[RMDB]
RNA sequence: GGGAACGACUCGAGUAGAGUCGAAAAAAAAGCAGCGAAUGCACUGGGCUCUGAAAGCCGCGAAAGCGAUCGCUGAGGCGAAGGCACCGUACGAUGUUGUUCAGCUGCGCCCAGAUCCAGCCACAUCAACCGUCGCAGUCUGCGCGGUCAACGACAAGUACCACCUUGAAUUCGUUCAAGGUGGUACAAAAGAAACAACAACAACAAC
Reactivity to 2A3 in 0.01 (KOAc 150mM, MgCl2 10mM, bicine 150mM(pH8.5), 24C), signal-to-noise 1, nucleotides 027 to 156: a000a000a000a000g070c030a020g030c100g040a050a020u070g000c000a000c080u000g000g000g060c080u030c030u200g080a130a150a040g000c070c040g020c070g020a040a070a090g130c040g000a010u030c030g000c000u070g020a060g050g000c020g000a020a030g030g000c010a100c160c040g000u000a040c090g000a040u000g000u180u000g060u030u070c020a000g010c010u040g010c020g030c040c000c000a000g060a020u090c070c010a000g020c000c000a030c000a050u110c090a060a010c020c000g110u160c000g020c000a040g130u000c110u180g020c050g000c010g000g040u010c070a080a060c000g110a000c040a140a000